[RMDB]
RNA sequence: GGGAACGACUCGAGUAGAGUCGAAAAGGUCUAUCGCUGGGCGUCGUGGAUGCAGACAUGCCGGGUACUGAAGCGCGCACGGUAUUGGCAACAGCUGCAUCGUAACAUCGACGCCUGUGCUGAAGCGCGCACGGCAACCGAAAGGUGCGUAGUAGAACAUAGCUAAAGUGUUCGCACUUUAGCUAUGAAAAGAAACAACAACAACAAC
Reactivity to DMS in 0.01 (KOAc 150mM, MgCl2 10mM, bicine 150mM(pH8.5), 24C), signal-to-noise 3, nucleotides 027 to 156: g020g060u010c040u000a090u000c020g030c020u000g040g020g030c000g020u000c010g070u000g020g010a050u010g010c010a030g000a070c030a270u010g030c020c010g020g000g000u000a050c000u000g010a090a060g020c010g030c010g000c000a300c020g000g030u000a020u000u000g040g030c000a070a080c080a080g000c020u000g000c000a030u000c020g020u010a050a100c100a040u000c000g010a030c020g040c010c010u000g000u000g010c010u000g030a070a100g020c040g020c010g060c010a210c000g000g010c010a090a070c040c010g010a150a090a170g020g030u000g010c020g020u000a110g010u000a050g010a080a190
Reactivity to 2A3 in 0.01 (KOAc 150mM, MgCl2 10mM, bicine 150mM(pH8.5), 24C), signal-to-noise 4, nucleotides 027 to 156: g090g040u040c040u050a070u150c060g010c010u030g000g010g000c000g000u010c000g020u020g090g000a010u000g010c000a000g080a180c030a100u180g000c000c000g100g010g000u040a030c020u030g060a150a060g010c010g000c000g000c010a030c020g000g000u030a030u040u110g030g000c050a190a040c050a300g110c000u000g010c000a000u010c000g030u070a030a060c050a190u180c020g000a000c010g000c000c010u020g000u010g000c020u040g020a090a040g000c000g000c000g000c000a010c010g020g000c020a040a080c000c000g040a060a060a030g000g000u020g000c000g010u090a060g070u020a020g070a070a030

Source: RMDB library RNAMAK, as collected in RNAgym. This 207-nucleotide RNA was probed chemically with DMS and 2A3. The reactions ran in a buffer of 150 mM KOAc, 10 mM MgCl2 and 150 mM bicine (pH 8.5), at 24 C.